[RMDB]
RNA sequence: GGGAACGACUCGAGUAGAGUCGAAAAGCGGGGCUUGAAACGCGGGUAGCGCGCACGCCCGGCGAAGAAGUUCGCAGACGCGGUGUGCUGGUGCCGAAGUGUCUGCUGCAACGGCACGCUCGACACCUAGAACAUACCGUAUUCGUACGGUAUGUAAGACGUACUUUAUCUUCGGAUAAAGUACGUCAAAAGAAACAACAACAACAAC
Reactivity to 2A3 in 0.01 (KOAc 150mM, MgCl2 10mM, bicine 150mM(pH8.5), 24C), signal-to-noise 4, nucleotides 027 to 156: g030c040g000g010g000g000c030u040u070g100a100a090a040c090g000c060g010g050g020u120a050g080c050g000c000g000c050a000c020g010c000c000c000g000g010c020g000a010a010g060a060a010g130u020u040c010g000c030a010g020a120c070g000c080g010g040u030g010u020g040c060u070g030g020u040g010c020c020g000a070a040g040u020g020u090c060u100g040c050u040g020c040a070a030c020g020g000c000a000c030g030c050u030c020g020a020c010a010c020c000u020a020g040a140a010c000a000u000a000c000c000g000u000a010u010u080c110g040u010a000c000g000g010u000a000u000g000u000a020a040
Reactivity to DMS in 0.01 (KOAc 150mM, MgCl2 10mM, bicine 150mM(pH8.5), 24C), signal-to-noise 2, nucleotides 027 to 156: g010c020g030g050g060g000c050u000u000g010a070a150a050c030g000c050g000g020g030u000a130g000c050g040c030g000c040a040c070g020c020c030c010g040g000c010g010a030a100g010a170a150g000u000u010c020g000c030a160g010a080c070g000c010g000g000u000g020u010g020c000u000g000g020u000g000c050c020g030a050a130g030u000g020u000c020u000g030c050u010g020c050a090a230c080g020g020c000a020c000g000c060u010c000g010a060c020a040c000c010u000a140g000a180a060c010a010u000a010c000c000g000u000a040u010u000c300g040u000a030c000g000g020u000a010u000g010u010a040a100